[RMDB]
RNA sequence: GGGAACGACUCGAGUAGAGUCGAAAAUCCUAAGUCACCAGUUGAUCGAAGUGCGACGAUCGGACGUUGUCAGUAUCGGAAACGAUACUUGGAUUUACGUCCGGGAGCAUUAAUUGAUGCUGGUGAUAUGGAAAAGGCAUUACUUCGGUAAUGCCAAACAUAGCUAGGCGUUCGCGCCUAGCUAUGUAAAAGAAACAACAACAACAAC
Reactivity to 2A3 in 0.01 (KOAc 150mM, MgCl2 10mM, bicine 150mM(pH8.5), 24C), signal-to-noise 2, nucleotides 027 to 156: u020c000c000u000a010a020g010u030c000a000c010c000a000g020u050u070g180a050u020c030g020a100a040g000u000g000c120g040a300c010g020a290u000c000g000g000a000c000g000u020u010g010u000c010a000g000u000a010u000c000g030g040a070a030a080c000g000a000u000a010c000u000u090g150g010a010u170u080u230a000c010g000u000c000c010g000g000g000a010g010c000a000u060u300a300a110u060u130g020a010u040g000c020u000g000g000u000g000a000u010a010u030g000g020a010a010a200a240g000g000c020a000u020u000a000c000u000u120c300g110g000u000a000a000u000g000c010c020a000a010
Chemical mapping of a 207-nucleotide RNA with 2A3. Values cover nucleotides 27 to 156. For 2A3 the reverse transcriptase was SuperScript II with manganese. The RNA was probed in 150 mM KOAc, 10 mM MgCl2 and 150 mM bicine (pH 8.5) at 24 C.